[RMDB]
RNA sequence: GGGAACGACUCGAGUAGAGUCGAAAAUUAGUCAUAGCUGGAAGAAGGGCUCAAGUAAAGGGCUCUGUGCCUGUGACAUCCUCAGAGAGACCAGGGAAAGACCUGUAAACCUUGAGGAAUGUGUGCACAUGAAGAGGCCCACAGGUCUGGGACGUGACUGGACGUAUUUAUUCGUAAAUACGUCCAGAAAAGAAACAACAACAACAAC
Reactivity to 2A3 in 0.01 (KOAc 150mM, MgCl2 10mM, bicine 150mM(pH8.5), 24C), signal-to-noise 3, nucleotides 027 to 156: u060u030a040g020u020c000a000u010a020g010c020u030g090g030a180a040g030a050a020g070g000g000c010u010c050a090a130g070u140a220a100a100g010g010g000c000u040c010u010g020u030g020c000c010u050g000u000g020a010c000a020u050c010c000u040c040a030g030a010g000a010g030a170c010c030a030g040g040g060a120a260a020g080a130c020c000u010g010u070a070a070a050c000c020u020u020g020a010g030g070a290a040u040g050u010g050u080g040c080a000c000a040u080g040a050a040g010a010g000g040c030c030c040a010c000a000g030g000u020c010u030g020g010g010a030c070g030u080g040a000
Reactivity to DMS in 0.01 (KOAc 150mM, MgCl2 10mM, bicine 150mM(pH8.5), 24C), signal-to-noise 2, nucleotides 027 to 156: u000u000a070g000u000c030a060u000a070g010c020u000g000g000a160a120g010a060a040g020g020g010c010u000c020a080a050g030u000a130a120a150g000g020g010c010u000c020u000g000u000g010c030c010u000g080u020g000a060c000a060u000c010c000u000c040a060g010a110g010a080g000a230c300c000a050g000g000g000a160a100a070g010a090c000c010u000g020u000a050a110a180c010c010u000u000g020a070g020g000a160a010u000g020u010g000u010g010c010a050c010a070u000g040a120a230g000a070g010g010c040c020c130a030c030a020g010g000u000c010u000g020g000g000a100c050g010u000g020a180
Chemical mapping of a 207-nucleotide RNA with 2A3 and DMS. For DMS, 2,914 sequencing reads were counted. 2A3 adducts were read by reverse transcription with SuperScript II with manganese. Conditions: 150 mM KOAc, 10 mM MgCl2 and 150 mM bicine (pH 8.5), 24 C. DMS adducts were read by reverse transcription with MarathonRT. The data come from the RNA Mapping Database (RMDB), library OK3TST.